The record gives the reactivity of an RNA of 177 nucleotides to 2A3 and DMS. For DMS, 843 sequencing reads were counted. 2A3 adducts were read by reverse transcription with SuperScript II with manganese. The 2A3 profile rests on 1,241 reads.
RNA sequence: GGGAACGACUCGAGUAGAGUCGAAAAGAACAGACUGCCGCACUGGCUGCCCUGAUGAGAACACACCCGUGACUAGCGUCGAAACAUCAACAGUGCGGGCUGUUGGUGUCGGCAGCCACUAAAAGAAGCACUAUAUCGACUUCGGUCGAUAUAGUGCAAAAGAAACAACAACAACAAC
Reactivity to 2A3 in 0.01 (KOAc 150mM, MgCl2 10mM, bicine 150mM(pH8.5), 24C), signal-to-noise 2, nucleotides 027 to 126: g040a100a040c060a040g170a050c000u000g030c020c000g000c000a000c000u000g030g000c050u060g000c000c060c000u050g000a000u030g000a020g090a040a000c010a000c000a010c000c030c000g020u060g020a250c180u120a070g020c000g040u100c030g050a080a140a000c000a000u030c000a010a130c010a040g160u080g230c040g070g000g000c060u060g000u060u000g000g020u050g090u110c110g000g000c010a010g000c000c000a080c000u150a080a110a000a060g120a010a060
Reactivity to DMS in 0.01 (KOAc 150mM, MgCl2 10mM, bicine 150mM(pH8.5), 24C), signal-to-noise 1, nucleotides 027 to 126: g010a150a210c000a170g000a030c000u000g000c000c000g000c040a180c010u000g000g000c000u000g000c060c000c040u000g050a000u070g000a120g000a030a120c030a060c220a270c210c270c130g000u000g040a010c010u020a120g000c040g000u000c170g000a050a000a080c000a000u030c010a000a050c300a200g000u090g080c170g040g100g000c000u020g000u060u000g070g070u000g000u010c000g000g020c000a000g020c030c060a000c100u030a000a030a110a140g060a030a020